[RMDB]
RNA sequence: GGGAACGACUCGAGUAGAGUCGAAAAGCAACCACCUUCGGGUGGUUGCAAAUGACGAUGCACGAUGUCGAAGACGAAGAUGCUGAAGACGACGACGAACAAAAAGACCCACGUUCGCGUGGGUCAAGUACAUAUUUAGGUUCGCCUAAAUAUGUACAAAAGAAACAACAACAACAAC
Reactivity to DMS in 0.01 (KOAc 150mM, MgCl2 10mM, bicine 150mM(pH8.5), 24C), signal-to-noise 9, nucleotides 027 to 126: g000c000a010a000c000c000a000c000c000u000u010c190g030g020g040u000g000g010u000u000g010c000a010a020a080u020g000a040c020g010a130u000g010c010a080c020g010a040u010g010u000c020g010a090a090g000a120c050g010a080a070g000a060u010g010c030u000g000a100a080g010a070c060g010a050c040g010a060c060g000a080a080c140a060a070a060a110a110g000a010c000c000c000a000c000g010u000u000c190g030c010g040u000g000g000g010u000c010a000a030
Reactivity to 2A3 in 0.01 (KOAc 150mM, MgCl2 10mM, bicine 150mM(pH8.5), 24C), signal-to-noise 9, nucleotides 027 to 126: g000c000a000a000c000c000a010c010c010u030u060c170g140g000g000u000g000g000u000u000g000c000a000a000a000u070g000a000c010g010a010u030g010c010a010c020g020a030u220g000u020c010g030a060a020g040a010c040g030a040a040g050a090u120g020c040u060g040a060a030g030a030c030g000a010c020g020a010c030g040a130a030c050a060a100a020a010a020g000a000c000c000c000a000c010g010u040u040c250g000c010g050u000g000g000g000u000c000a000a000
Description: Structure probing data (DMS and 2A3) for a 177-nucleotide construct. The data come from the RNA Mapping Database (RMDB), library M2PK50. The 2A3 profile rests on 40,978 reads. The RNA was probed in 150 mM KOAc, 10 mM MgCl2 and 150 mM bicine (pH 8.5) at 24 C.